This 207-nucleotide RNA was probed chemically with 2A3 and DMS.

RNA sequence: GGGAACGACUCGAGUAGAGUCGAAAAGAGCGAUUAGACAAAGGGGUAGAGCUACAUAUUAGAUAGCUGUAUAAUCGUUCAAGUUACAUCAGAACAUCUUCAAUAUUUAUUACUUACUUUCCUUUCUGCCAGAGUACGGUAUUCGUACCGUACUCAAUUGACUUGACGUAUUCGUACGUCAAGUCAAAAAAGAAACAACAACAACAAC
Reactivity to 2A3 in 0.01 (KOAc 150mM, MgCl2 10mM, bicine 150mM(pH8.5), 24C), signal-to-noise 2, nucleotides 027 to 156: g000a000g000c010g010a010u000u020a030g030a040c090a030a150a080g080g000g000g050u020a020g020a000g060c000u030a000c010a060u300a120u180u170a060g170a260u010a000g000c020u030g000u040a040u030a000a000u000c000g000u000u010c020a050a000g000u020u230a030c020a070u060c030a060g030a090a010c030a040u010c060u130u050c080a050a100u110a140u110u190u090a120u110u070a010c060u080u010a020c000u060u110u070c000c000u060u100u060c020u040g030c000c020a050g000a000g000u000a000c000g030g010u020a040u010u040c120g020u010a000c010c010g000u000a000c000u000c000a000a000
Reactivity to DMS in 0.01 (KOAc 150mM, MgCl2 10mM, bicine 150mM(pH8.5), 24C), signal-to-noise 1, nucleotides 027 to 156: g010a070g000c000g050a050u000u010a030g030a060c040a050a110a020g000g010g040g020u000a140g000a050g030c000u000a050c030a190u010a190u000u000a080g020a130u000a030g030c050u000g020u010a030u000a020a010u010c010g090u000u000c100a040a100g000u030u000a030c050a090u000c050a080g000a080a130c050a110u010c070u000u000c040a050a120u010a130u000u000u000a100u020u000a070c100u000u000a060c040u000u010u000c000c010u000u000u000c040u000g030c070c060a230g010a010g050u000a010c030g000g020u000a040u010u010c280g030u010a000c000c000g030u000a000c010u020c000a010a020
Source: RMDB library M2RFPK, as collected in RNAgym.
2A3 adducts were read by reverse transcription with SuperScript II with manganese.
Conditions: 150 mM KOAc, 10 mM MgCl2 and 150 mM bicine (pH 8.5), 24 C.
For 2A3, 1,055 sequencing reads were counted.
For DMS, 1,807 sequencing reads were counted.